[RMDB]
RNA sequence: GGGAACGACUCGAGUAGAGUCGAAAAAGGUGAUCCACCUGCCUUGGCCUGCCAAAGUGCAAGGAUUACAGGCGUGAGCCACCGGGCCCAGCCUUGGUUAUUUGUUUAAUAAUUGUUAAAUGAAUGAAUGACUGUCACUUUUCGAAGUGACAGUCAUAAAAGAAACAACAACAACAAC
Reactivity to DMS in 0.01 (KOAc 150mM, MgCl2 10mM, bicine 150mM(pH8.5), 24C), signal-to-noise 1, nucleotides 027 to 126: a080g010g000u000g010a220u000c000c000a040c040c040u000g000c020c000u010u000g010g000c070c000u010g000c180c080a070a100a070g030u000g020c020a030a010g000g020a280u010u010a240c070a030g030g020c000g040u030g000a020g000c100c020a050c030c000g010g010g030c050c000c000a150g010c080c050u000u010g010g010u000u000a020u000u010u000g000u000u010u020a020a040u010a140a140u020u040g000u000u000a030a030a060u000g000a020a060u010g010a090